[RMDB]
RNA sequence: GGGAACGACUCGAGUAGAGUCGAAAACGUAGUCUACCUUCGGGUAGACUACGGAGCAUGUCGAGAGACAUGCCAGUCUAUCGCGUCGCCCGCCCCUGGUGACGGCCUGCGAGGGUACCAGCCUCCUUCGUUGAUAGACAUGGGGCACGGCUGGCAAGGUCAUUAAAUAGUUCGCUAUUUAAUGACCAAAAGAAACAACAACAACAAC
Reactivity to 2A3 in 0.01 (KOAc 150mM, MgCl2 10mM, bicine 150mM(pH8.5), 24C), signal-to-noise 3, nucleotides 027 to 156: c010g000u000a000g000u000c000u000a010c020c000u020u090c270g100g000g000u000a000g000a000c000u000a000c000g010g000a020g000c000a000u000g000u000c000g010a000g000a010g000a140c000a000u000g010c010c000a000g010u000c010u010a030u030c020g000c010g050u000c000g000c000c010c020g090c000c010c000c020u060g040g010u020g020a020c020g020g010c030c080u050g000c010g020a020g000g020g000u030a130c000c000a010g000c000c000u060c000c000u020u020c020g040u040u130g020a030u030a030g020a010c070a150u120g000g020g040g030c110a030c060g010g000c000u010g000g000c030a120a080
Reactivity to DMS in 0.01 (KOAc 150mM, MgCl2 10mM, bicine 150mM(pH8.5), 24C), signal-to-noise 1, nucleotides 027 to 156: c010g010u000a000g010u000c000u010a000c000c000u000u020c300g030g030g030u000a010g010a010c000u000a000c000g020g010a060g000c000a020u000g020u010c010g020a290g000a300g040a030c000a030u040g020c010c010a080g000u010c020u000a050u000c000g000c100g010u010c010g000c000c000c010g050c010c030c050c080u010g000g050u000g030a080c030g030g020c060c030u000g040c060g000a110g010g000g010u010a080c020c010a070g010c000c000u010c000c080u020u000c030g010u000u000g000a110u000a040g000a030c040a100u010g040g020g030g000c110a020c060g000g030c000u010g020g000c080a090a190